[RMDB]
RNA sequence: GGGAACGACUCGAGUAGAGUCGAAAAGAUAUGGAAUCUGCGAACAUCCCUGGACGUUGAAAUCGGAAACGAUGGAGUCCAGGAUGGAGGUAUAGAUUCCUAAGUCAAAUCCCACUUCGGUGGGAAAGUAAAUAUGCGAGUUCGCUCGCAUAUUUACAAAAGAAACAACAACAACAAC
Reactivity to DMS in 0.01 (KOAc 150mM, MgCl2 10mM, bicine 150mM(pH8.5), 24C), signal-to-noise 2, nucleotides 027 to 126: g000a060u000a300u020g010g000a030a000u000c000u020g020c040g020a160a180c030a000u000c110c030c040u000g000g000a030c000g000u000u020g000a080a230a010u000c000g000g000a130a090a220c050g000a000u000g000g010a110g010u000c010c020a010g010g000a000u000g010g010a030g020g040u010a070u000a040g010a000u000u000c000c000u000a030a040g000u010c050a070a090a100u000c010c010c000a000c010u000u010c190g040g040u000g000g010g010a020a010a060
Reactivity to 2A3 in 0.01 (KOAc 150mM, MgCl2 10mM, bicine 150mM(pH8.5), 24C), signal-to-noise 2, nucleotides 027 to 126: g000a010u070a060u100g010g010a010a000u000c030u050g080c050g080a150a030c010a030u070c120c010c020u010g020g000a000c030g200u300u100g000a030a040a000u020c000g000g020a070a060a040c030g000a000u000g000g050a010g010u040c010c000a000g000g010a000u010g010g040a030g010g200u300a200u120a150g000a000u020u000c000c010u020a160a010g000u000c020a000a000a180u020c000c020c000a000c020u060u050c300g080g000u000g000g000g000a000a030a000